[RMDB]
RNA sequence: GGGAACGACUCGAGUAGAGUCGAAAAGCAGUAUGAGGGUGCCUCACUGCCGGGACGCCUGCUGAGCAUUACAGAGCAGGUCACUGGUGAAGCCGCCCGCGUCACCGAGCGUUUUACGUAUGCCGCAUGAUCCCCAAAAUUUCGAUUUUGGGGAUCAAAAAGAAACAACAACAACAAC
Reactivity to DMS in 0.01 (KOAc 150mM, MgCl2 10mM, bicine 150mM(pH8.5), 24C), signal-to-noise 3, nucleotides 027 to 126: g010c040a070g000u010a040u000g020a070g020g030g020u010g010c100c010u010c070a100c070u010g010c040c010g010g020g010a130c300g000c020c010u010g000c020u000g000a220g030c120a130u010u020a140c180a090g020a050g010c000a020g000g000u000c100a090c040u010g010g020u000g010a080a060g030c070c050g000c010c030c040g020c060g000u000c020a090c080c020g000a100g010c050g000u000u000u000u000a060c100g010u000a050u000g020c030c040g030c150a190
Reactivity to 2A3 in 0.01 (KOAc 150mM, MgCl2 10mM, bicine 150mM(pH8.5), 24C), signal-to-noise 1, nucleotides 027 to 126: g020c000a000g050u150a070u100g040a020g020g050g080u040g080c020c020u060c000a060c010u040g010c030c000g040g000g000a030c120g000c000c010u030g000c000u020g020a080g130c050a080u010u200a130c060a060g160a010g030c000a010g030g000u010c020a010c060u030g040g050u080g050a040a030g070c050c020g000c060c030c010g000c060g010u020c020a090c040c040g000a030g030c000g030u050u060u220u110a030c000g040u070a040u080g040c020c010g010c060a060